[RMDB]
RNA sequence: GGGAACGACUCGAGUAGAGUCGAAAAGAAGAGACCGCCACGAGGAGUCAGGGUUCAGACACGAUCCAAGAGAACACGGUGACACUGACUGUGUAGCGGAAGAGGCAAAGAGAGUGGCGGAAGAGAAAUAUAGGGUCGAUUUCGAUCGACCCUAUAUAAAAGAAACAACAACAACAAC
Reactivity to 2A3 in 0.01 (KOAc 150mM, MgCl2 10mM, bicine 150mM(pH8.5), 24C), signal-to-noise 4, nucleotides 027 to 126: g080a030a020g050a010g010a060c000c000g000c000c000a010c010g030a020g110g060a020g010u000c020a010g030g020g000u090u110c010a040g060a130c020a000c110g000a010u030c020c010a140a100g120a040g010a070a010c100a010c120g000g030u010g010a010c010a000c050u000g010a000c010u010g020u030g080u260a010g010c010g010g050a000a050g110a050g010g040c050a050a130a000g100a010g010a010g000u000g020g030c010g000g000a030a010g030a000g010a030a140
Reactivity to DMS in 0.01 (KOAc 150mM, MgCl2 10mM, bicine 150mM(pH8.5), 24C), signal-to-noise 4, nucleotides 027 to 126: g000a100a100g000a180g020a130c010c000g030c000c010a010c020g020a180g020g020a050g000u000c040a020g000g000g000u000u000c150a080g020a150c070a160c110g000a130u020c020c040a090a130g000a160g010a050a040c100a050c050g020g000u000g000a060c020a100c040u000g000a010c010u000g000u000g040u000a100g020c020g000g020a090a080g000a120g000g000c050a090a090a120g040a120g020a210g000u010g000g020c010g000g000a040a050g000a110g010a060a080
Chemical mapping of a 177-nucleotide RNA with 2A3 and DMS. The reactions ran in a buffer of 150 mM KOAc, 10 mM MgCl2 and 150 mM bicine (pH 8.5), at 24 C. The DMS profile rests on 4,870 reads. DMS adducts were read by reverse transcription with MarathonRT. Source: RMDB library OK1LIB, as collected in RNAgym.